Source: RMDB library OK2TST, as collected in RNAgym. The record gives the reactivity of an RNA of 177 nucleotides to DMS and 2A3. The DMS profile rests on 7,283 reads. The reactions ran in a buffer of 150 mM KOAc, 10 mM MgCl2 and 150 mM bicine (pH 8.5), at 24 C. DMS adducts were read by reverse transcription with MarathonRT.
RNA sequence: GGGAACGACUCGAGUAGAGUCGAAAAUGUAGAUGCAAAGCGUUGUACCUAUCAGUGUGUUGAUACCAAUAUAUGUGUAUUUGUCUGCAAGCGGUGUGAAUAUACAAGCGGUAUUUCAUACAAACGAAUGCUUUUACGCAUUCGUGCGUAAAAGCAUAAAAGAAACAACAACAACAAC
Reactivity to DMS in 0.01 (KOAc 150mM, MgCl2 10mM, bicine 150mM(pH8.5), 24C), signal-to-noise 6, nucleotides 027 to 126: u010g010u010a040g010a070u000g010c070a050a080a150g020c100g010u010u000g030u000a060c040c020u000a060u000c140a080g020u000g020u000g000u000u000g020a030u010a050c040c010a080a160u010a140u010a160u000g010u000g010u000a010u000u000u000g010u000c030u000g020c130a080a130g010c080g020g030u010g020u000g000a010a020u010a030u000a020c020a050a110g010c240g010g010u000a020u000u000u000c040a030u000a010c040a070a130a130c170g010a070
Reactivity to 2A3 in 0.01 (KOAc 150mM, MgCl2 10mM, bicine 150mM(pH8.5), 24C), signal-to-noise 3, nucleotides 027 to 126: u110g000u010a020g020a090u080g000c040a080a010a110g040c050g040u030u030g020u060a060c020c010u040a070u190c050a040g020u020g010u020g030u130u080g010a010u020a050c000c020a110a000u090a020u020a050u190g050u010g010u030a000u010u040u030g070u030c040u040g020c110a140a070g040c050g070g020u060g010u020g030a020a000u050a020u010a030c020a030a040g060c040g060g000u010a020u010u030u000c030a030u040a010c000a010a090a020c050g100a060